Source information
Source: RMDB library RNAMAK, as collected in RNAgym. An RNA of 207 nucleotides, treated with 2A3 and DMS and read out base by base.
RNA sequence: GGGAACGACUCGAGUAGAGUCGAAAAGGGGUCACCAUCAGGAUUCGGGACACAGCUAGAGCUGCUGAAGCCUCCACGGCAGCUCUUGGACCUGUGUUCUCUAGCGUGAUCCGACGACGGUGACGGAGGCACCCAAAGAGCGUGUUCGCACGCUCAACAUAAUAAGAUGCUUCGGCAUCUUAUUAUGAAAAGAAACAACAACAACAAC
Reactivity to 2A3 in 0.01 (KOAc 150mM, MgCl2 10mM, bicine 150mM(pH8.5), 24C), signal-to-noise 6, nucleotides 027 to 156: g080g010g010g000u010c010a000c020c000a040u060c030a020g020g010a020u090u150c070g000g000g000a000c000a000c000a000g020c020u010a000g000a000g010c000u000g000c000u010g020a070a020g010c010c000u010c000c000a030c010g000g010c000a000g000c010u000c010u000u030g010g050a050c010c010u000g000u000g010u080u000c030u000c020u090a130g120c090g300u300g040a000u000c000c010g010a060c120g010a020c050g000g000u000g000a000c010g000g000a000g000g010c000a030c000c000c000a050a130a010g000a000g000c020g010u020g040u090u160c240g010c110a000c000g000c000u000c000a000a010
Reactivity to DMS in 0.01 (KOAc 150mM, MgCl2 10mM, bicine 150mM(pH8.5), 24C), signal-to-noise 3, nucleotides 027 to 156: g000g020g050g020u000c000a000c010c010a040u000c030a190g030g000a070u000u010c060g030g000g020a040c010a030c020a040g020c050u010a030g010a060g030c000u040g000c010u000g010a060a080g020c010c010u020c000c010a300c040g000g010c030a020g010c020u000c000u000u010g040g000a080c230c010u010g000u010g000u000u000c010u000c040u000a130g000c190g030u020g000a030u000c010c010g000a080c150g010a050c030g020g010u000g010a070c010g010g030a040g050g060c000a120c020c010c030a070a140a160g000a030g020c000g030u000g020u000u000c160g040c020a010c010g000c010u010c000a010a160
2A3 adducts were read by reverse transcription with SuperScript II with manganese. The 2A3 profile rests on 11,463 reads. Values are in units of 0.01, from 0 to 300, in steps of 10.